[RMDB]
RNA sequence: GGGAACGACUCGAGUAGAGUCGAAAAUGGUAGGUUUACUACGUGUCUGAGUUGGGAGCAUUACCGUGUUAGCCGUAUAGUUCAGCGACACCAGCUAUAGUAGUAGAUUAACUAGACGCGUAGUCAAGGGUAUUUCAAACUUCGGUUUGAAAUGCCCAAAAGAAACAACAACAACAAC
Reactivity to 2A3 in 0.01 (KOAc 150mM, MgCl2 10mM, bicine 150mM(pH8.5), 24C), signal-to-noise 8, nucleotides 027 to 126: u240g050g060u160a110g010g070u030u080u050a010c000u000a000c010g010u010g020u000c020u080g170a010g050u020u020g050g030g030a080g050c040a080u060u090a080c030c020g010u020g030u060u060a060g010c010c020g030u070a070u080a100g130u090u090c040a010g020c010g020a010c010a020c020c020a010g010c020u050a030u060a170g100u010a020g030u010a030g030a130u090u080a020a000c000u000a000g000a000c000g000c000g010u000a000g010u000c020a050a040
Reactivity to DMS in 0.01 (KOAc 150mM, MgCl2 10mM, bicine 150mM(pH8.5), 24C), signal-to-noise 5, nucleotides 027 to 126: u010g030g010u020a040g000g010u010u010u010a050c000u000a020c010g020u000g010u000c010u000g010a030g000u010u000g020g020g000a140g010c100a120u020u010a040c110c200g010u000g010u020u010a060g060c000c100g000u020a070u030a130g010u020u010c110a090g030c040g000a070c040a040c020c150a090g000c080u010a060u010a100g010u010a050g020u000a060g000a260u020u040a030a010c010u000a020g000a020c020g000c000g000u000a020g000u000c180a050a110

Source: RMDB library OK1LIB, as collected in RNAgym.
Chemical mapping of a 177-nucleotide RNA with 2A3 and DMS.
Values cover nucleotides 27 to 126.
Reactivities are rounded to 0.1 and cut off at 0 and 3.
The 2A3 profile rests on 14,213 reads.
The reactions ran in a buffer of 150 mM KOAc, 10 mM MgCl2 and 150 mM bicine (pH 8.5), at 24 C.